Chemical mapping of a 177-nucleotide RNA with 2A3 and DMS. For 2A3 the reverse transcriptase was SuperScript II with manganese. It was measured as part of the RMDB library TTRDES. For DMS the reverse transcriptase was MarathonRT. For 2A3, 4,795 sequencing reads were counted. The reactions ran in a buffer of 150 mM KOAc, 10 mM MgCl2 and 150 mM bicine (pH 8.5), at 24 C. For DMS, 4,117 sequencing reads were counted.

RNA sequence: GGGAACGACUCGAGUAGAGUCGAAAAGAUAUGGACUCCUCUCCUACACGUUGAAAGUCGCUCGGAAACGAGCGACUGGAGUGUAGGGAGAGGGAGUCCUAAGUCAAAAGCACACUUCGGUGUGCAACUCCUAAAGUAGCUUCGGCUACUUUAGGAGAAAAGAAACAACAACAACAAC
Reactivity to 2A3 in 0.01 (KOAc 150mM, MgCl2 10mM, bicine 150mM(pH8.5), 24C), signal-to-noise 2, nucleotides 027 to 126: g010a030u100a050u170g000g000a000c000u000c010c000u000c000u000c020c010u010a000c010a000c010g300u300u050g040a030a040a000g020u000c000g030c000u000c030g030g020a080a080a070c030g000a000g030c000g010a000c000u000g020g000a010g000u030g000u000a060g080g160g000a000g020a000g040g050g010a020g010u000c000c000u000a110a010g020u010c030a050a010a070a210g000c000a010c000a010c030u070u220c300g110g000u020g010u000g040c000a000a010
Reactivity to DMS in 0.01 (KOAc 150mM, MgCl2 10mM, bicine 150mM(pH8.5), 24C), signal-to-noise 3, nucleotides 027 to 126: g010a070u000a300u000g010g010a020c000u000c010c000u000c000u000c000c010u010a010c000a020c010g000u020u010g000a150a130a040g010u000c000g040c010u010c010g010g000a100a120a230c000g000a000g010c000g010a000c000u000g000g000a050g010u000g010u000a000g020g010g010a020g000a020g010g010g000a010g010u000c000c000u000a020a050g010u000c060a130a120a140a160g000c000a010c000a010c000u000u010c210g020g010u000g030u000g000c020a050a080